[RMDB]
RNA sequence: GGGAACGACUCGAGUAGAGUCGAAAACCGGUCAGUCACAAGACUUAGAGUGCUUUUUUGAAAUCACUCAGAGUCGUGCUUACCAGGAAGUUCAAGAGACAUUCGAGUAUUACGUGCAAACCUAUGACCAUAUCAGGACCUUCGGGUCCUGAUAUGGAAAAGAAACAACAACAACAAC
Reactivity to 2A3 in 0.01 (KOAc 150mM, MgCl2 10mM, bicine 150mM(pH8.5), 24C), signal-to-noise 1, nucleotides 027 to 126: c010c000g020g000u050c050a050g070u120c040a000c070a100a300g010a010c020u010u050a030g000a010g010u010g000c010u110u080u130u070u160u290g260a040a060a010u050c000a000c010u000c020a040g010a000g010u000c000g010u000g030c000u010u000a010c000c000a050g060g040a090a080g060u060u060c100a080a040g060a000g010a050c020a010u000u070c050g000a000g020u000a100u120u220a070c100g050u070g070c030a030a080a070c000c000u010a230u090g000a070
Reactivity to DMS in 0.01 (KOAc 150mM, MgCl2 10mM, bicine 150mM(pH8.5), 24C), signal-to-noise 2, nucleotides 027 to 126: c030c020g010g000u000c070a000g010u020c050a050c070a190a190g000a040c000u010u000a200g010a020g010u000g000c070u000u000u020u000u060u000g020a020a000a000u010c000a020c000u000c010a300g040a030g010u000c020g070u000g010c030u000u000a020c040c020a230g020g000a040a050g020u020u000c110a090a080g040a140g020a040c070a100u000u010c040g020a040g010u000a070u010u010a110c070g010u010g000c210a020a080a100c020c020u000a070u000g010a210